The record gives the reactivity of an RNA of 177 nucleotides to 2A3 and DMS. The RNA was probed in 150 mM KOAc, 10 mM MgCl2 and 150 mM bicine (pH 8.5) at 24 C. For 2A3 the reverse transcriptase was SuperScript II with manganese.
[RMDB]
RNA sequence: GGGAACGACUCGAGUAGAGUCGAAAAAUGAGAACAUUCGUAGUAAAUACAUAUUGGUGGUGGCGCUUCGUACAACUCAAAAGGUCGUAAGGAACGAAGACUCGUAUGUAUAUAUAAACACUACAUAUUCAGGUACUUGAUUCGUCAAGUACCUGAAAAAAGAAACAACAACAACAAC
Reactivity to 2A3 in 0.01 (KOAc 150mM, MgCl2 10mM, bicine 150mM(pH8.5), 24C), signal-to-noise 4, nucleotides 027 to 126: a000u250g020a090g010a060a040c060a180u060u100c100g000u010a000g000u030a040a130a040u010a020c010a010u050a010u040u110g140g020u050g060g090u090g130g050c080g000c030u000u000c000g000u010a030c000a030a020c030u030c080a000a000a040a020g010g000u000c010g030u060a010a070g080g020a020a030c000g010a020a010g030a030c020u000c030g000u000a000u000g010u000a000u000a000u000a000u050a050a100a000c080a000c020u020a020c010a050u110a180
Reactivity to DMS in 0.01 (KOAc 150mM, MgCl2 10mM, bicine 150mM(pH8.5), 24C), signal-to-noise 3, nucleotides 027 to 126: a080u020g000a120g040a140a110c130a070u010u010c200g010u020a000g000u010a080a110a020u000a030c000a010u000a010u000u010g030g020u000g000g010u040g000g030c060g030c030u000u000c000g010u000a000c010a030a010c020u020c050a090a040a130a300g010g010u000c050g000u000a050a060g000g000a000a030c020g000a110a080g000a030c030u000c050g000u020a000u000g010u000a000u000a080u040a100u030a130a040a090c140a040c010u000a010c010a090u030a140
Reactivities are given for positions 27 through 126.